RNA sequence: GGGAACGACUCGAGUAGAGUCGAAAAACGAAGCAGCGUGCUCUUGCCGAUACCAGAGCCAGCGGUGAACAGCGUGACUUCACCCUUGCGGAGACCUCCAAGGCGCUCUUGAAGCUGCGGCGUCUUGGCACAUUCCGAUCUUCGGAUCGGAAUGUGCAAAAGAAACAACAACAACAAC
Reactivity to DMS in 0.01 (KOAc 150mM, MgCl2 10mM, bicine 150mM(pH8.5), 24C), signal-to-noise 1, nucleotides 027 to 126: a090c120g000a220a180g020c030a040g100c160g040u000g030c030u000c070u010u030g050c050c060g000a110u110a150c060c120a080g000a060g000c010c000a040g000c120g000g000u000g040a000a000c090a060g030c160g010u030g020a090c280u000u000c000a060c000c000c000u020u090g000c060g010g000a060g000a060c010c010u000c020c030a040a000g000g000c000g030c030u000c090u000u070g010a100a080g000c050u000g040c050g010g010c000g000u040c000u000u000g000
Reactivity to 2A3 in 0.01 (KOAc 150mM, MgCl2 10mM, bicine 150mM(pH8.5), 24C), signal-to-noise 2, nucleotides 027 to 126: a000c050g020a030a010g040c020a010g050c030g160u100g030c010u010c020u050u100g010c050c050g130a060u140a200c040c000a000g030a010g040c000c000a000g010c100g070g020u020g030a020a060c030a120g180c030g090u030g040a040c010u000u010c000a050c000c000c000u060u090g010c040g010g040a010g030a050c000c010u010c030c000a010a000g000g000c000g000c010u030c000u050u150g140a090a020g040c090u100g000c000g030g000c000g000u000c000u000u000g000